This 207-nucleotide RNA was probed chemically with DMS and 2A3. 2A3 adducts were read by reverse transcription with SuperScript II with manganese. Source: RMDB library M2RFPK, as collected in RNAgym. Values cover nucleotides 27 to 156. DMS adducts were read by reverse transcription with MarathonRT. The DMS profile rests on 2,198 reads.
RNA sequence: GGGAACGACUCGAGUAGAGUCGAAAAGAAACGCAAGGCCGCUGACCGACGGGAUAUUGUGGGGCUUACCACAGGGGACGUGGCGUUAUCACUUGCCUUUUAAGCCGACCGUCUGGGCUGCAUACAAACCACCCAACUAUCUUCGGAUAGUUGGGAACAGAUGGUCUAACUUCGGUUAGACCAUCUGAAAAGAAACAACAACAACAAC
Reactivity to DMS in 0.01 (KOAc 150mM, MgCl2 10mM, bicine 150mM(pH8.5), 24C), signal-to-noise 1, nucleotides 027 to 156: g010a090a030a070c070g060c050a100a060g000g060c010c010g040c030u000g090a090c000c000g060a050c050g010g020g010a090u010a070u000u000g010u000g000g010g020g040c110u010u010a060c080c070a030c050a130g040g000g000g030a070c150g010u000g000g020c070g010u010u000a070u010c010a030c080u000u010g020c000c000u000u000u010u000a040a090g020c020c000g000a070c060c030g000u010c010u010g020g000g020c090u000g000c050a110u020a080c060a100a050a130c020c030a200c000c010c000a000a010c000u000a010u000c000u010u010c300g060g010a000u020a010g100u000u000g010g000g000a000a010
Reactivity to 2A3 in 0.01 (KOAc 150mM, MgCl2 10mM, bicine 150mM(pH8.5), 24C), signal-to-noise 3, nucleotides 027 to 156: g010a000a060a000c120g020c050a030a080g110g010c030c040g040c090u060g100a060c000c050g000a010c030g020g020g030a090u110a070u210u180g040u080g050g010g030g080c050u080u050a080c050c020a030c050a070g030g000g020g020a010c050g030u000g000g010c100g040u100u150a100u170c020a000c120u100u080g040c000c030u100u160u040u050a010a020g010c000c000g020a080c000c000g030u000c030u030g000g030g000c010u000g020c010a060u090a060c040a030a140a030c110c010a020c000c000c000a000a000c000u000a000u000c000u000u070c110g070g000a000u000a000g000u000u000g000g000g000a010a000